Structure probing data (2A3) for a 177-nucleotide construct. The 2A3 profile rests on 418 reads. Values cover nucleotides 27 to 126.

[RMDB]
RNA sequence: GGGAACGACUCGAGUAGAGUCGAAAAUAUGAGUGAACCCUCUUAUAAAUCUGAGCUUAUAGUCCCUUACCCUACUAGGGGGAGAUCUGAGGAGGGGAGAUCAAGAGGGCGCGCAGAUAGAGGAAAACUAAAGAGUCCGGUUCGCCGGACUCUUUAGAAAAGAAACAACAACAACAAC
Reactivity to 2A3 in 0.01 (KOAc 150mM, MgCl2 10mM, bicine 150mM(pH8.5), 24C), signal-to-noise 2, nucleotides 027 to 126: u190a050u060g100a030g060u110g100a080a060c010c150c010u040c030u060u270a220u160a300a080a080u050c010u010g030a000g080c000u110u170a060u210a260g150u300c010c000c020u070u050a180c040c000c000u160a300c040u230a210g110g010g030g010g000a060g040a030u000c010u060g100a040g010g060a040g020g030g030g000a010g000a010u030c020a000a110g040a030g070g050g000c000g000c000g050c040a000g060a170u080a060g040a060g030g040a100a090a000a000